[RMDB]
RNA sequence: GGGAACGACUCGAGUAGAGUCGAAAAUAAAACACGUAACGUGAGCACAGUCGGUAGUGCAGCAGGACCGAAACCUGCAGCGAAAGGGUUCAAGACCCUGUUCGCGCAAAAACCGAAGAAAAAAAAAUCAUUAUAGUAAGUUCGCUUACUAUAAUGAAAAAGAAACAACAACAACAAC
Reactivity to DMS in 0.01 (KOAc 150mM, MgCl2 10mM, bicine 150mM(pH8.5), 24C), signal-to-noise 4, nucleotides 027 to 126: u010a060a040a100a110c010a000c030g030u010a090a080c140g030u000g000a200g010c000a010c000a040g010u010c020g000g000u000a020g000u000g000c010a140g000c010a000g010g010a120c040c060g010a090a070a080c000c000u010g010c000a190g020c000g010a030a090a010g000g000g010u000u010c210a080a130g010a090c010c000c000u000g000u000u000c020g020c000g000c140a040a020a010a060a020c020c000g040a040a200g020a100a010a000a000a020a080a140a110a060
Reactivity to 2A3 in 0.01 (KOAc 150mM, MgCl2 10mM, bicine 150mM(pH8.5), 24C), signal-to-noise 2, nucleotides 027 to 126: u100a000a070a010a010c050a020c050g150u220a300a000c100g010u060g050a030g020c000a000c010a010g070u010c000g000g020u030a020g010u020g010c020a010g000c000a000g020g000a090c060c080g050a080a030a030c010c000u000g000c020a010g010c010g000a010a010a000g040g000g010u070u090c100a080a050g120a110c000c000c000u000g070u030u000c000g000c000g040c030a020a040a020a050a020c000c060g000a040a020g040a030a040a000a000a000a000a000a000a010
This 177-nucleotide RNA was probed chemically with DMS and 2A3. For DMS, 3,298 sequencing reads were counted. For 2A3, 3,666 sequencing reads were counted. Conditions: 150 mM KOAc, 10 mM MgCl2 and 150 mM bicine (pH 8.5), 24 C.